[RMDB]
RNA sequence: GGGAACGACUCGAGUAGAGUCGAAAAGGCCAGCCCUGGUUCUCCAUCCCCAUGUGUUUCAGGUGGAACAGGAGGAACUGGUCCAGGCCAGGCCUCAUCCUCCUGGACCCAGCAGGGGCAGAAGGAGGAAGGGACUGGUCCAGGCAUGGGUCCCUUCCUCCUUCCGAGAUUUCGAUCUCGGAAGGAGAAAAGAAACAACAACAACAAC
Reactivity to DMS in 0.01 (KOAc 150mM, MgCl2 10mM, bicine 150mM(pH8.5), 24C), signal-to-noise 3, nucleotides 027 to 156: g010g010c010c020a070g020c020c000c000u020g010g000u010u000c010u000c030c000a230u010c030c000c000c030a130u020g020u000g010u000u000u000c060a100g020g020u000g010g010a050a230c080a120g020g010a070g030g020a040a300c020u010g020g020u010c000c110a110g010g000c040c060a040g010g010c010c000u000c030a270u000c010c010u010c010c020u000g000g010a140c020c010c020a150g000c070a090g010g010g000g040c140a060g030a130a150g000g010a040g030g000a130a170g000g000g000a000c000u000g010g010u000c000c020a040g010g000c050a100u000g000g000g000u000c000c000c010u000u010c010
Reactivity to 2A3 in 0.01 (KOAc 150mM, MgCl2 10mM, bicine 150mM(pH8.5), 24C), signal-to-noise 3, nucleotides 027 to 156: g000g000c000c010a000g000c000c010c000u070g180g000u050u060c010u000c010c000a100u080c010c020c000c020a090u050g050u000g050u040u110u170c050a050g000g040u070g020g070a060a060c050a090g220g010a010g020g020a120a200c010u010g010g010u020c050c090a100g110g060c000c010a010g010g060c010c020u020c000a040u010c000c000u000c000c000u010g010g000a020c000c020c010a050g080c080a060g020g000g010g010c020a100g080a250a110g000g000a000g010g000a010a020g020g000g010a090c000u010g000g000u010c000c040a030g030g030c070a070u140g120g000g050u070c000c000c050u010u120c000
Overview
The record gives the reactivity of an RNA of 207 nucleotides to DMS and 2A3. 2A3 adducts were read by reverse transcription with SuperScript II with manganese. For 2A3, 5,144 sequencing reads were counted. The RNA was probed in 150 mM KOAc, 10 mM MgCl2 and 150 mM bicine (pH 8.5) at 24 C. Values cover nucleotides 27 to 156.